An RNA of 207 nucleotides, treated with 2A3 and DMS and read out base by base. The reactions ran in a buffer of 150 mM KOAc, 10 mM MgCl2 and 150 mM bicine (pH 8.5), at 24 C. It was measured as part of the RMDB library RNAMAK. Values are in units of 0.01, from 0 to 300, in steps of 10. The 2A3 profile rests on 8,172 reads. For DMS, 5,893 sequencing reads were counted. DMS adducts were read by reverse transcription with MarathonRT.
RNA sequence: GGGAACGACUCGAGUAGAGUCGAAAACUCUGGUUCGCCAGAGGAACACUCCUAAGUCUCCGAUAAGAUGUUUGGAGCAACAGCCUAUCGGAAACGAUAGGACAUGCUCCAUACAUCUUUUGACGGAGAUAUGGACCUUAAACCGUUUCGACGGUAAAAUCUGUAGCUAUUUCGAUAGCUACAGAUUAAAAGAAACAACAACAACAAC
Reactivity to 2A3 in 0.01 (KOAc 150mM, MgCl2 10mM, bicine 150mM(pH8.5), 24C), signal-to-noise 6, nucleotides 027 to 156: c000u000c000u000g020g090u070u060c260g070c040c010a000g000a010g000g020a040a040c090a050c040u030c000c010u040a120a070g030u000c000u000c010c000g040a060u010a050a010g010a000u000g010u010u030u010g000g000a000g000c000a030a050c040a070g060c000c000u000a000u000c020g000g050a160a060a060c010g010a020u010a010g010g020a010c010a070u020g010c010u000c000c000a000u000a000c000a000u000c000u000u000u010u010g030a020c010g010g000a000g000a000u000a000u000g000g000a010c010c000u130u140a200a170a050c010c010g020u040u180u140c280g110a040c010g010g020u040a150a130
Reactivity to DMS in 0.01 (KOAc 150mM, MgCl2 10mM, bicine 150mM(pH8.5), 24C), signal-to-noise 2, nucleotides 027 to 156: c000u010c000u000g010g020u000u000c300g050c000c000a020g010a040g020g000a040a060c090a080c120u020c000c010u000a080a220g010u000c000u000c000c020g010a190u000a020a030g000a010u000g040u000u000u000g030g000a040g000c010a040a040c070a260g000c000c000u040a010u000c010g000g000a190a120a240c020g010a060u000a010g020g000a030c020a150u010g000c000u000c000c000a000u000a000c040a020u010c000u000u010u000u000g010a240c100g000g010a050g010a000u000a050u000g000g000a050c040c060u040u000a080a120a060c010c000g020u010u000u000c110g020a060c000g000g000u000a030a090